[RMDB]
Notes:
Source: RMDB library M2PK50, as collected in RNAgym. An RNA of 177 nucleotides, treated with DMS and 2A3 and read out base by base. DMS adducts were read by reverse transcription with MarathonRT.
RNA sequence: GGGAACGACUCGAGUAGAGUCGAAAACCCGUUUUGUUCGCAAAACGGGACUCAUCUUUGCUUGGCAGCAUAGCAGGUGUUGGCUGGACUGCUGGCUUAACCUUGGAGGCAGUUUCGACUGCCUCAAAUCAAGUGGUAAGUUCGCUUACCACUUGAUAAAAGAAACAACAACAACAAC
Reactivity to DMS in 0.01 (KOAc 150mM, MgCl2 10mM, bicine 150mM(pH8.5), 24C), signal-to-noise 8, nucleotides 027 to 126: c000c000c000g010u000u000u000u000g010u000u020c180g020c010a010a010a010a010c010g010g000g010a110c050u000c110a110u010c080u000u010u000g010c010u000u010g030g010c060a030g020c080a100u010a030g010c020a060g010g020u010g010u000u000g010g010c020u000g000g000a170c040u000g000c010u000g010g000c010u000u010a070a110c110c100u000u010g000g010a030g000g010c000a010g010u000u010u010c180g010a040c000u000g000c000c000u000c000a010a040
Reactivity to 2A3 in 0.01 (KOAc 150mM, MgCl2 10mM, bicine 150mM(pH8.5), 24C), signal-to-noise 6, nucleotides 027 to 126: c000c000c000g000u000u000u010u000g020u010u050c200g000c120a000a000a010a000c000g010g000g040a060c020u020c070a170u040c070u070u140u100g010c020u060u190g040g000c010a010g000c010a080u070a080g010c030a050g070g100u120g110u300u220g140g010c010u010g000g060a100c010u020g000c000u010g050g000c010u040u080a080a080c010c020u030u110g150g000a000g000g010c000a000g000u010u050u100c140g060a020c000u040g000c000c000u010c010a010a000